[RMDB]
RNA sequence: GGGAACGACUCGAGUAGAGUCGAAAAUGCAGCUGGGCAUGCUGAUCCCCGGAGCCGUCCCUUCGGAGGCCAUCGCCCGUGGGGCCUCCGGGUCCGACUCGGGGGCCAUCAAGAGCGGAGACAACAAGCUGUCGCUAAAUUUCGAUUUAGCGACAGCAAAAGAAACAACAACAACAAC
Reactivity to DMS in 0.01 (KOAc 150mM, MgCl2 10mM, bicine 150mM(pH8.5), 24C), signal-to-noise 1, nucleotides 027 to 126: u000g010c040a000g000c030u000g000g000g070c130a060u030g030c000u000g000a030u000c050c040c000c040g000g000a010g010c120c020g000u010c010c040c000u010u020c010g090g000a160g040g030c040c030a100u000c090g040c030c000c090g060u040g000g000g000g060c000c000u000c000c040g000g000g000u000c150c100g000a090c030u000c040g090g000g000g000g030c020c010a030u000c020a240a180g000a140g030c040g000g050a130g000a010c030a060a060c300a040a040
Reactivity to 2A3 in 0.01 (KOAc 150mM, MgCl2 10mM, bicine 150mM(pH8.5), 24C), signal-to-noise 1, nucleotides 027 to 126: u120g030c000a000g000c040u120g010g000g140c070a070u090g000c010u050g040a160u130c030c000c000c000g120g010a010g000c010c020g060u080c000c000c000u090u120c040g000g010a000g000g050c020c010a080u070c090g080c030c020c000g000u100g000g050g000g000c000c000u000c010c000g000g000g000u000c050c070g120a160c000u000c010g000g000g000g000g000c000c000a040u130c000a060a030g070a020g030c020g010g010a060g000a070c040a130a020c020a070a090
The record gives the reactivity of an RNA of 177 nucleotides to DMS and 2A3. The 2A3 profile rests on 838 reads. 2A3 adducts were read by reverse transcription with SuperScript II with manganese. The reactions ran in a buffer of 150 mM KOAc, 10 mM MgCl2 and 150 mM bicine (pH 8.5), at 24 C. Values cover nucleotides 27 to 126.